This 207-nucleotide RNA was probed chemically with DMS and 2A3. The data come from the RNA Mapping Database (RMDB), library ARCHII.

RNA sequence: GGGAACGACUCGAGUAGAGUCGAAAAGUACCUGCAAUCCGCUAUAGCAGGGUUGAAUUCCUCGAUUUGAGGCUAUACUAUGUGGGGUCUGACCUAUAUAAGUGGCGUUGAGAAUUGGGUCCCACGCAACGGAAACUCAUGAAACCCGUCAGGUCCGGUUCCGUUAAUAGUUCGCUAUUAACGGAACAAAAGAAACAACAACAACAAC
Reactivity to DMS in 0.01 (KOAc 150mM, MgCl2 10mM, bicine 150mM(pH8.5), 24C), signal-to-noise 2, nucleotides 027 to 156: g010u000a050c000c010u050g010c050a030a060u000c010c030g000c010u000a100u010a180g040c020a140g030g070g010u000u000g000a080a190u000u010c020c000u010c070g030a160u000u000u010g040a150g010g030c090u000a150u000a140c060u000a070u000g010u030g000g000g000g000u000c140u030g020a150c010c030u000a080u000a080u010a070a080g010u010g080g020c020g010u000u000g010a200g010a070a110u020u000g020g000g010u000c010c020c020a050c080g020c100a070a140c030g010g000a080a070a090c050u000c030a080u010g020a080a090a110c070c030c000g000u000c050a080g010g000u010c020c020g000
Reactivity to 2A3 in 0.01 (KOAc 150mM, MgCl2 10mM, bicine 150mM(pH8.5), 24C), signal-to-noise 4, nucleotides 027 to 156: g030u020a030c000c000u000g000c010a010a060u050c030c070g020c070u120a060u130a200g010c080a060g020g000g020u050u070g050a060a080u090u090c000c010u040c040g220a300u050u030u270g030a030g020g020c030u090a070u040a150c050u030a050u130g040u050g000g000g000g010u020c030u040g060a080c000c010u040a040u030a020u030a220a070g040u070g040g000c020g010u020u060g040a040g030a100a080u080u060g050g000g000u000c000c010c020a000c040g020c020a020a020c020g010g000a070a080a060c040u080c030a060u100g060a050a090a080c020c010c010g020u050c020a010g030g000u010c030c020g030
For DMS the reverse transcriptase was MarathonRT. The RNA was probed in 150 mM KOAc, 10 mM MgCl2 and 150 mM bicine (pH 8.5) at 24 C.